Chemical mapping of a 177-nucleotide RNA with 2A3 and DMS. DMS adducts were read by reverse transcription with MarathonRT. For 2A3 the reverse transcriptase was SuperScript II with manganese. Reactivities are given for positions 27 through 126. 2A3 is a SHAPE reagent: it acylates the 2'-hydroxyl of flexible nucleotides of all four kinds.
RNA sequence: GGGAACGACUCGAGUAGAGUCGAAAACUUCUAAAACCUACUUCUGUCAAUUUGUUAAACGCAUUCUCCAUCCAGUUUUGUUCCCUUGCUGGCGAGGGAGUUGUGAUCCUUUGAAGGAGAAGAGGCAAGUUACAGGCUGAUUCGUCAGCCUGUAACUAAAAGAAACAACAACAACAAC
Reactivity to 2A3 in 0.01 (KOAc 150mM, MgCl2 10mM, bicine 150mM(pH8.5), 24C), signal-to-noise 1, nucleotides 027 to 126: c000u000u050c030u120a180a140a100a070c050c000u130a210c040u050u000c000u010g170u090c060a020a120u110u110u110g110u160u260a210a130a060c100g010c080a030u180u140c000u000c010c020a190u080c000c000a010g000u030u030u150u160g020u060u060c070c000c000u000u060g000c020u020g010g000c000g060a090g030g000g070a100g010u080u000g030u010g020a110u050c000c000u040u030u030g060a140a030g100g030a070g000a010a060g020a030g080g000c010a000
Reactivity to DMS in 0.01 (KOAc 150mM, MgCl2 10mM, bicine 150mM(pH8.5), 24C), signal-to-noise 1, nucleotides 027 to 126: c080u000u000c040u000a060a090a090a110c020c010u000a120c000u000u000c020u000g000u010c040a100a080u010u020u000g020u010u040a050a080a060c080g010c020a060u000u000c000u000c030c040a140u000c010c030a010g020u010u020u000u010g000u000u000c010c000c000u000u010g020c020u000g010g000c170g000a070g010g000g010a020g010u010u000g010u010g000a070u000c120c010u000u000u010g020a100a120g000g000a080g010a050a060g020a070g000g010c070a080